[RMDB]
RNA sequence: GGGAACGACUCGAGUAGAGUCGAAAAUCCAGCUCUGAGGGAGCAGGUAAAAUAAUACAGCUCAUAUCCGGAGGCAUAGCCAGAGAUCUGUGGUCAAGGGGAAGAGGUCAGAGCCAAUUUCCAAAGCUGUGCACAUUUCAGGCUGCAGCUGUCAGCAGACGAAGUAUGUUUUCGAACAUACUUCGUCAAAAGAAACAACAACAACAAC
Reactivity to 2A3 in 0.01 (KOAc 150mM, MgCl2 10mM, bicine 150mM(pH8.5), 24C), signal-to-noise 4, nucleotides 027 to 156: u020c000c000a010g010c000u020c010u030g100a150g040g140g010a040g040c050a010g140g010u070a090a120a070a090u250a070a030u110a110c040a020g010c000u020c060a060u070a080u140c050c040g050g010a020g050g000c050a040u090a010g020c000c020a030g030a000g010a160u050c030u060g040u080g040g030u060c060a090a100g020g020g020g010a040a060g030a030g040g050u020c050a020g020a010g080c010c000a020a060u050u070u010c020c020a080a020a010g030c000u020g010u050g030c050a040c030a180u130u240u160c030a040g030g010c010u050g000c030a020g010c010u010g040u070c050a040g070c030a030
Reactivity to DMS in 0.01 (KOAc 150mM, MgCl2 10mM, bicine 150mM(pH8.5), 24C), signal-to-noise 2, nucleotides 027 to 156: u000c020c000a170g010c000u000c030u010g030a240g000g000g010a090g030c030a070g040g020u000a060a080a030a120u000a100a150u000a070c050a120g050c000u000c020a090u020a140u000c050c010g020g020a080g020g030c030a080u000a040g010c030c020a110g040a120g010a040u000c070u000g050u000g030g010u000c040a100a110g020g040g000g030a060a100g000a200g010g020u000c010a070g010a140g000c000c030a050a150u010u010u000c020c020a030a170a100g010c030u000g050u000g010c000a050c050a130u000u000u000c060a110g020g050c010u010g010c030a070g010c030u000g010u000c020a080g040c040a300